Background:
Chemical mapping of a 177-nucleotide RNA with 2A3 and DMS. The reactions ran in a buffer of 150 mM KOAc, 10 mM MgCl2 and 150 mM bicine (pH 8.5), at 24 C. The 2A3 profile rests on 24,070 reads. The data come from the RNA Mapping Database (RMDB), library OK2TST.
[RMDB]
RNA sequence: GGGAACGACUCGAGUAGAGUCGAAAACGCUACCGCAGUGGUUACCGAAAAUCGCACAAUUUUGGUUGCCAGCGGGUAGCCAACUGGUUUUAACCCAUCCCCCAGUUUGGCAUGAUGGCGCAUUGCGUAGUAUGUACAUGUUCGCAUGUACAUACUAAAAAGAAACAACAACAACAAC
Reactivity to 2A3 in 0.01 (KOAc 150mM, MgCl2 10mM, bicine 150mM(pH8.5), 24C), signal-to-noise 9, nucleotides 027 to 126: c020g000c020u040a040c000c010g000c040a100g200u030g070g010u010u030a000c000c010g030a010a010a010a050u170c100g040c160a060c050a210a110u010u010u010u030g010g000u010u030g000c000c000a020g020c030g040g020g020u020a020g000c000c000a010a030c020u020g020g100u040u060u090u240a110a130c030c020c010a080u120c010c000c000c000c000a010g000u040u090u070g030g000c030a020u090g040a060u100g090g020c020g000c110a100u030u160g010c020g010
Reactivity to DMS in 0.01 (KOAc 150mM, MgCl2 10mM, bicine 150mM(pH8.5), 24C), signal-to-noise 9, nucleotides 027 to 126: c110g010c050u010a100c010c000g010c030a150g020u010g010g010u000u000a010c010c000g010a010a010a030a070u000c140g010c170a100c210a090a160u000u000u000u000g000g010u000u000g010c000c010a090g010c030g010g010g010u000a050g010c000c080a030a030c060u000g010g010u000u010u010u000a100a150c070c030c040a130u010c030c030c050c020c010a040g000u000u000u010g020g010c020a110u000g000a110u000g010g000c030g020c070a120u000u010g010c080g020